Source: RMDB library OK2TST, as collected in RNAgym. An RNA of 177 nucleotides, treated with DMS and 2A3 and read out base by base. The reactions ran in a buffer of 150 mM KOAc, 10 mM MgCl2 and 150 mM bicine (pH 8.5), at 24 C. For DMS, 1,501 sequencing reads were counted. As a SHAPE reagent, 2A3 marks flexible, mostly unpaired nucleotides at the ribose 2'-OH.
RNA sequence: GGGAACGACUCGAGUAGAGUCGAAAAUGACUGCGUGGUUCAUUUCUCAGGGUAGUGAGAACGUCAUAAGAAGUCUGGCCUUGGAAAUGAGAAAAGAGCAAGAGUCACUUUCCAAGCAGGAUAUUGAUCAUUAGCGCUAGUUCGCUAGCGCUAAUGAAAAAGAAACAACAACAACAAC
Reactivity to DMS in 0.01 (KOAc 150mM, MgCl2 10mM, bicine 150mM(pH8.5), 24C), signal-to-noise 2, nucleotides 027 to 126: u000g000a120c000u000g000c100g040u000g030g020u000u000c020a020u010u000u000c000u010c020a040g030g000g010u000a070g020u010g020a080g000a060a090c080g000u020c070a110u020a120a180g000a120a120g010u000c010u010g010g010c050c010u010u020g000g020a000a040a010u000g000a060g000a030a020a080a070g010a060g010c080a150a170g010a120g010u000c060a050c060u000u010u010c000c000a020a070g010c050a110g010g000a090u000a080u000u000g010a230
Reactivity to 2A3 in 0.01 (KOAc 150mM, MgCl2 10mM, bicine 150mM(pH8.5), 24C), signal-to-noise 2, nucleotides 027 to 126: u040g000a000c010u030g040c000g050u090g060g020u120u060c000a010u020u030u000c100u010c030a020g130g040g000u050a090g120u070g100a080g010a080a030c030g060u070c040a040u090a260a140g100a110a000g020u000c020u010g040g020c000c020u020u020g000g020a030a030a020u030g000a040g020a060a110a000a030g110a020g030c050a090a010g060a030g140u080c010a000c040u030u040u000c030c000a010a020g030c030a030g040g050a030u060a040u120u120g060a040